[RMDB]
RNA sequence: GGGAACGACUCGAGUAGAGUCGAAAAAUGAUGUCACAAUACCUACAGGUGAUUCGUAAGGAUAAGUGAUUAAACGACUUAAUACAUCUGAUAGUAGUAACAAAUCUGCACCUAUAAUAAAUGUUAACAUACAGCUCGUGUUCGCACGAGCUGUAUGAAAAGAAACAACAACAACAAC
Reactivity to DMS in 0.01 (KOAc 150mM, MgCl2 10mM, bicine 150mM(pH8.5), 24C), signal-to-noise 2, nucleotides 027 to 126: a160u020g000a070u000g010u010c160a080c180a120a070u020a050c160c010u000a070c080a020g040g020u000g020a170u000u000c150g040u000a200a120g000g030a030u000a020a070g010u030g000a170u000u010a010a090a110c140g000a100c080u000u000a040a070u000a110c060a030u000c000u010g000a170u000a020g000u000a030g030u000a050a040c110a050a080a060u000c020u020g000c150a080c030c000u010a070u010a050a050u000a050a080a060u000g000u000u030a030a150
Reactivity to 2A3 in 0.01 (KOAc 150mM, MgCl2 10mM, bicine 150mM(pH8.5), 24C), signal-to-noise 1, nucleotides 027 to 126: a000u040g040a010u110g020u080c050a080c050a110a070u080a080c010c020u020a000c010a030g010g010u020g070a160u010u180c130g040u080a070a000g050g030a100u110a220a100g050u050g130a060u170u250a180a160a000c020g020a000c020u030u020a090a000u050a170c010a050u020c000u000g040a090u010a060g060u010a010g010u020a040a050c030a090a240a010u010c050u010g000c040a060c040c030u100a140u080a200a150u110a010a160a060u100g000u070u090a050a000